[RMDB]
RNA sequence: GGGAACGACUCGAGUAGAGUCGAAAAGCGUGCGGUGGCCGCGACCCUGGUCCUCGGAGAGGUCCGGGCCUGACCUUUUGGUUGGCGCUAACGCCCGUCGGGCUGUUUUGGCGCUGUUCAGGCUGAGUCACCUCUCGUACUUCGGUACGAGAGGUGAAAAAGAAACAACAACAACAAC
Reactivity to 2A3 in 0.01 (KOAc 150mM, MgCl2 10mM, bicine 150mM(pH8.5), 24C), signal-to-noise 3, nucleotides 027 to 126: g030c050g060u130g030c020g100g210u100g060g010c020c000g050c010g090a120c040c000c000u030g070g030u050c020c070u030c070g180g060a190g000a040g130g030u000c030c000g000g030g020c000c010u010g010a080c000c020u070u300u170u180g080g020u050u240g030g000c000g000c000u010a000a000c010g020c000c000c070g230u150c190g030g010g000c080u150g020u010u040u130u150g010g020c000g000c000u000g030u010u000c010a000g010g000c000u020g010a010g060
Reactivity to DMS in 0.01 (KOAc 150mM, MgCl2 10mM, bicine 150mM(pH8.5), 24C), signal-to-noise 1, nucleotides 027 to 126: g000c040g020u050g010c030g030g040u010g040g010c000c020g000c000g010a070c050c040c030u030g000g000u010c010c010u000c070g010g020a070g000a050g010g010u010c030c040g000g000g000c030c020u020g010a030c070c040u050u040u020u040g010g010u030u010g000g000c000g010c010u000a020a020c030g010c010c000c010g000u030c150g010g010g000c020u030g000u000u010u040u000g020g000c020g020c000u010g000u040u020c020a040g000g000c000u000g000a140g010